[RMDB]
RNA sequence: GGGAACGACUCGAGUAGAGUCGAAAAUGAACGUGCGUACAUCUCUCUCAGACUGUACGACAGUCUGACUCUCUCGCACUCUAGUUCCACGAGAGAGAGAGAGCGUUGGAACUAGGGUGUAAUGAAAUGAAUUUAUAAGGUUCGCCUUAUAAAUUCAAAAAGAAACAACAACAACAAC
Reactivity to 2A3 in 0.01 (KOAc 150mM, MgCl2 10mM, bicine 150mM(pH8.5), 24C), signal-to-noise 8, nucleotides 027 to 126: u140g010a090a010c070g070u140g060c020g010u120a020c030a070u020c020u010c010u000c010u000c060a030g040a160c080u020g010u080a060c060g080a050c040a000g040u000c020u030g030a050c000u010c000u000c010u020c080g000c010a000c000u000c000u000a000g000u000u000c010c000a000c010g050a080g010a010g000a000g000a010g010a010g020a060g010c020g060u100u090g000g000a000a000c000u000a000g000g020g000u000g000u030a130a200u180g050a060a050a100
Reactivity to DMS in 0.01 (KOAc 150mM, MgCl2 10mM, bicine 150mM(pH8.5), 24C), signal-to-noise 6, nucleotides 027 to 126: u010g010a060a060c100g010u010g030c030g010u000a030c030a060u000c010u000c030u000c060u000c040a150g010a070c140u000g010u000a050c100g000a110c050a050g000u000c020u000g000a120c090u000c030u000c040u010c080g020c040a030c000u000c000u000a020g000u000u000c000c010a040c040g000a070g000a090g000a070g000a050g010a050g000a060g020c040g010u010u000g010g010a010a020c010u000a010g000g010g010u000g010u000a020a040u000g000a070a090a120